Structure probing data (2A3 and DMS) for a 177-nucleotide construct. For 2A3 the reverse transcriptase was SuperScript II with manganese.
[RMDB]
RNA sequence: GGGAACGACUCGAGUAGAGUCGAAAAGAUAUGGAAUGAUUAUAAUCUCAACAGCUCGGAAACGAGACAUGAGAAUAGCAUUCCUAAGUCAAACGAAGAAGAUUGUGUUCGCACAAUCUUCUUCGAACCUCUAUGUGGCGUUCGCGCCACAUAGAGGAAAAGAAACAACAACAACAAC
Reactivity to 2A3 in 0.01 (KOAc 150mM, MgCl2 10mM, bicine 150mM(pH8.5), 24C), signal-to-noise 1, nucleotides 027 to 126: g010a010u050a040u140g040g030a010a010u030g040a040u100u150a060u130a220a230u000c010u030c020a070a150c020a200g080c010u000c020g100g090a140a080a040c010g020a030g000a000c070a120u100g000a000g010a040a020u040a000g120c000a010u020u030c010c010u000a170a000g060u020c040a070a090a060c040g000a000a000g010a000a000g010a000u010u020g030u010g040u030u080c230g000c150a030c020a010a010u020c000u000u030c000u010u000c000g000a000a000
Reactivity to DMS in 0.01 (KOAc 150mM, MgCl2 10mM, bicine 150mM(pH8.5), 24C), signal-to-noise 1, nucleotides 027 to 126: g000a060u000a300u000g000g010a000a030u020g000a030u060u000a060u000a110a110u010c000u000c000a070a120c240a140g010c000u000c000g000g000a130a080a160c010g020a000g010a010c250a040u000g000a020g010a010a010u000a030g020c000a000u000u000c000c000u030a050a160g010u000c000a050a130a250c060g000a000a000g020a030a020g010a010u000u000g000u000g000u000u050c300g040c000a000c000a040a000u000c000u010u010c000u000u000c020g000a010a050
For DMS the reverse transcriptase was MarathonRT.